This 177-nucleotide RNA was probed chemically with 2A3 and DMS.
RNA sequence: GGGAACGACUCGAGUAGAGUCGAAAAGCGCACCAUGUGAAGUUCGAGGGGCUUCAGGCGCUGUCCGGCGCACUUGCGCAGCAGCUGCAGGCAAAUGCAACUUCAGCGCGGGCCGGCCAGCCGGUAGCUUAAAAGGUUCCUUCGGGAACCUUUUAAGAAAAGAAACAACAACAACAAC
Reactivity to 2A3 in 0.01 (KOAc 150mM, MgCl2 10mM, bicine 150mM(pH8.5), 24C), signal-to-noise 1, nucleotides 027 to 126: g060c050g000c030a030c020c010a080u180g070u030g110a050a040g000u080u160c170g180a160g000g050g010g000c010u020u030c000a030g090g000c060g000c080u000g010u020c020c020g020g010c080g020c020a120c090u060u220g000c000g000c030a010g010c000a000g010c000u000g000c000a060g150g000c090a170a130a140u060g000c000a030a010c000u030u000c020a130g010c020g000c000g000g000g010c000c030g040g000c000c020a010g000c000c000g110g040u030a010g040
Reactivity to DMS in 0.01 (KOAc 150mM, MgCl2 10mM, bicine 150mM(pH8.5), 24C), signal-to-noise 3, nucleotides 027 to 126: g020c080g020c100a090c040c040a160u010g000u010g000a030a060g010u010u010c070g000a150g020g020g010g000c020u000u000c020a080g020g020c120g050c010u000g010u000c020c030g030g020c020g040c050a120c090u010u000g020c000g030c000a110g020c150a000g020c010u000g010c010a070g010g010c240a060a090a120u000g010c010a010a020c010u000u000c020a070g000c010g030c020g010g000g020c000c010g000g000c040c020a030g020c010c060g010g010u000a070g010
Annotation: Conditions: 150 mM KOAc, 10 mM MgCl2 and 150 mM bicine (pH 8.5), 24 C. It was measured as part of the RMDB library OK2TRN.